[RMDB]
RNA sequence: GGGAACGACUCGAGUAGAGUCGAAAAAGUAUCUAAUUCGUUAGAUACUCGGGGACGGGUGAGGCGGCCGUGUGCGCAGACAGUGCUCCAGCCGCGCCCGCGAAUUUCGCCUAUUCGUAGGCGAAAACCUUGACCAUAUUUUCGAAUAUGGUCAAGGAAAAGAAACAACAACAACAAC
Reactivity to DMS in 0.01 (KOAc 150mM, MgCl2 10mM, bicine 150mM(pH8.5), 24C), signal-to-noise 4, nucleotides 027 to 126: a020g010u000a000u000c000u000a010a020u000u010c180g020u000u000a000g000a010u000a000c000u000c040g010g000g000g010a200c020g000g000g020u000g010a110g040g020c010g010g000c010c020g000u000g010u000g010c020g010c020a120g010a100c280a110g010u000g000c000u000c020c010a070g000c000c000g020c030g000c000c000c000g010c060g000a070a130u000u000u000c010g020c000c000u000a030u000u010c190g010u000a010g000g010c000g000a000a010a030a120
Reactivity to 2A3 in 0.01 (KOAc 150mM, MgCl2 10mM, bicine 150mM(pH8.5), 24C), signal-to-noise 4, nucleotides 027 to 126: a020g000u010a000u010c000u000a040a020u090u080c150g040u050u010a000g000a010u010a010c000u010c030g020g010g020g030a020c010g020g020g020u090g140a150g240g080c010g000g030c000c030g130u210g010u040g060c020g000c020a030g140a300c070a090g090u010g030c010u000c010c000a010g000c000c000g000c000g000c000c000c000g010c010g030a020a040u010u010u010c000g000c010c000u000a040u010u050c250g060u020a000g000g000c000g000a000a000a000a000